[RMDB]
RNA sequence: GGGAACGACUCGAGUAGAGUCGAAAAAGGUAAAGCAGGAACAAAGGCAUGUCUUACAUGGUGGCAGGCAAGAGAGCAUGUGCAAGGGAACUGCCCUUUAUAAAACCAUCAGAUCUUGUGAGACUUAUUCACUAUCAUGAGAAUAGCACAGGAAAAACACUAGGCGGUCAUUCGUGACCGCCUAGUGAAAAGAAACAACAACAACAAC
Reactivity to 2A3 in 0.01 (KOAc 150mM, MgCl2 10mM, bicine 150mM(pH8.5), 24C), signal-to-noise 1, nucleotides 027 to 156: a020g070g000u210a020a020a050g060c080a050g000g020a000a050c040a000a140a000g000g000c000a000u060g010u070c040u050u150a140c100a120u030g100g020u020g100g120c030a040g080g000c040a010a000g000a000g000a000g040c060a120u120g000u010g000c090a050a030g010g030g050a040a040c000u070g000c000c000c000u020u010u010a180u060a030a100a000a030c030c010a060u020c010a050g100a190u010c040u010u090g010u000g050a010g010a010c000u070u070a060u090u040c010a010c120u040a180u070c080a100u180g020a000g040a190a000u030a000g000c000a030c000a060g070g060a040a090a080a060a000